Chemical mapping of a 177-nucleotide RNA with DMS.
DMS adducts were read by reverse transcription with MarathonRT.
Conditions: 150 mM KOAc, 10 mM MgCl2 and 150 mM bicine (pH 8.5), 24 C.
RNA sequence: GGGAACGACUCGAGUAGAGUCGAAAAUUCAUGGCGGGGCCUGUGCAUACCCCGUUUCAUCACCGGUUUGCAAACCUGAUUAGAGCGCACACUAUAAGUAGCAGGAAGGGCGUAGAUUCUUUGAACACAUUUGGAAAGACUUCGGUCUUUCCAAAUGAAAAGAAACAACAACAACAAC
Reactivity to DMS in 0.01 (KOAc 150mM, MgCl2 10mM, bicine 150mM(pH8.5), 24C), signal-to-noise 1, nucleotides 027 to 126: u010u000c080a050u010g010g010c000g000g020g050g000c130c030u000g040u010g000c050a100u030a110c010c010c000c010g030u000u000u000c030a030u010c130a140c120c060g000g000u000u010u010g010c120a020a090a060c030c030u000g000a160u000u000a120g000a100g030c110g000c000a030c030a070c120u000a060u000a030a100g010u000a050g010c050a030g000g010a080a050g000g020g000c090g040u010a030g000a080u000u000c010u000u000u000g010a100a140c240a210